[RMDB]
RNA sequence: GGGAACGACUCGAGUAGAGUCGAAAAGUCCCAUACUUCGGUAUGGGACAAAUAAACUUGACAAAAGCCUGUCAAGAAUCACCACAGGCAAAGUGGUGUAAAAAACUAACUUGUUCGCAAGUUAGAAGAUCUCUUUAAACUUCGGUUUAAAGAGAUCAAAAGAAACAACAACAACAAC
Reactivity to DMS in 0.01 (KOAc 150mM, MgCl2 10mM, bicine 150mM(pH8.5), 24C), signal-to-noise 2, nucleotides 027 to 126: g000u000c000c010c000a020u000a000c000u000u030c110g050g000u000a000u030g000g010g020a000c000a030a010a040u010a080a060a100c000u000u000g000a020c000a010a020a030a110g000c030c010u010g030u000c000a000a000g000a300a120u000c020a000c010c000a010c000a050g010g010c300a090a100a130g000u000g000g010u000g010u000a010a020a050a070a060a090c000u000a000a000c000u000u000g000u000u010c200g010c010a000a000g000u000u000a000g000a110a060
Reactivity to 2A3 in 0.01 (KOAc 150mM, MgCl2 10mM, bicine 150mM(pH8.5), 24C), signal-to-noise 2, nucleotides 027 to 126: g000u000c000c000c000a000u000a000c000u020u050c210g080g000u000a000u020g010g000g000a010c000a000a000a000u010a000a030a020c000u000u000g010a010c000a010a130a020a030g170c010c030u010g020u010c010a000a000g020a050a030u060c010a000c010c000a000c010a050g280g000c110a140a080a000g010u000g010g010u020g000u070a060a110a010a000a000a010c000u000a000a000c000u010u010g010u070u050c160g030c070a010a010g000u000u000a000g000a020a010